Chemical mapping of a 177-nucleotide RNA with 2A3 and DMS. Values are in units of 0.01, from 0 to 300, in steps of 10. The data come from the RNA Mapping Database (RMDB), library OK2TRN. For DMS the reverse transcriptase was MarathonRT. The RNA was probed in 150 mM KOAc, 10 mM MgCl2 and 150 mM bicine (pH 8.5) at 24 C.
RNA sequence: GGGAACGACUCGAGUAGAGUCGAAAAUCCAUGCAUGUCUGACGUACCUACCAUGGCGAUCCCAUGCGGUACACACACAGCGAUCCAUGGAUGCUAGUACAUGUGGAUCAGCUACUAGUGAUCAGAGCCCAAUAGGAGAUUUCGAUCUCCUAUUGGGAAAAGAAACAACAACAACAAC
Reactivity to 2A3 in 0.01 (KOAc 150mM, MgCl2 10mM, bicine 150mM(pH8.5), 24C), signal-to-noise 7, nucleotides 027 to 126: u020c000c010a030u120g090c050a070u160g090u080c020u020g040a040c070g010u000a010c000c000u020a030c020c010a010u010g000g020c080g040a070u070c010c000c000a000u010g010c020g010g010u010a000c020a000c010a000c000a000c010a010g010c010g020a010u000c010c000a010u030g130g020a030u030g090c070u110a070g040u140a040c030a080u080g020u050g060g030a040u040c030a050g020c000u020a030c030u050a060g040u010g050a050u080c030a020g030a040g080
Reactivity to DMS in 0.01 (KOAc 150mM, MgCl2 10mM, bicine 150mM(pH8.5), 24C), signal-to-noise 9, nucleotides 027 to 126: u000c010c000a110u020g010c210a100u000g010u000c030u010g020a130c260g020u000a010c000c010u010a160c300c010a010u000g000g010c170g000a130u010c080c000c000a020u010g060c070g010g020u000a010c020a280c090a040c120a080c070a020g010c030g010a040u000c070c010a030u000g000g010a050u000g000c030u000a060g010u010a100c050a050u000g010u000g010g010a060u000c030a080g030c090u000a040c080u000a090g000u000g010a230u010c030a050g010a130g010